[RMDB]
RNA sequence: GGGAACGACUCGAGUAGAGUCGAAAAGGUGAUCUGGACGGGAAGUAGGUCCAGCGACUGCAUCCGAAGCUUUGAUAAGAGCAACUCCAUCUACGUUGCUUAAGUAGGUGGUAGCAGCAAACACCGAAUUUAUGCGUCGGUUCGCCGACGCAUAAAUAAAAGAAACAACAACAACAAC
Reactivity to DMS in 0.01 (KOAc 150mM, MgCl2 10mM, bicine 150mM(pH8.5), 24C), signal-to-noise 2, nucleotides 027 to 126: g020g000u000g000a100u030c010u000g000g000a010c030g030g040g040a060a110g000u030a100g030g030u000c000c000a000g040c240g000a160c030u000g030c030a110u000c060c050g010a200a180g000c000u000u000u000g000a170u090a000a120g000a030g000c030a050a120c150u000c040c030a050u030c110u000a100c030g020u020u010g020c220u060u010a000a090g010u000a000g000g000u040g020g000u010a090g020c000a010g010c070a060a080a140c000a030c000c000g010a190
Reactivity to 2A3 in 0.01 (KOAc 150mM, MgCl2 10mM, bicine 150mM(pH8.5), 24C), signal-to-noise 3, nucleotides 027 to 126: g000g000u020g030a110u040c040u000g000g000a000c020g060g120g220a290a030g110u240a060g170g000u000c000c000a000g000c000g020a130c020u010g000c000a060u040c020c050g080a030a020g010c000u030u070u090g190a190u180a230a050g000a000g000c020a070a030c000u000c000c000a000u000c000u000a020c060g050u090u190g150c060u250u170a110a070g000u000a000g010g030u010g040g000u010a000g000c000a000g010c000a010a080a000c020a000c000c010g000a000

Chemical mapping of a 177-nucleotide RNA with DMS and 2A3. The reactions ran in a buffer of 150 mM KOAc, 10 mM MgCl2 and 150 mM bicine (pH 8.5), at 24 C. 2A3 adducts were read by reverse transcription with SuperScript II with manganese. For DMS the reverse transcriptase was MarathonRT.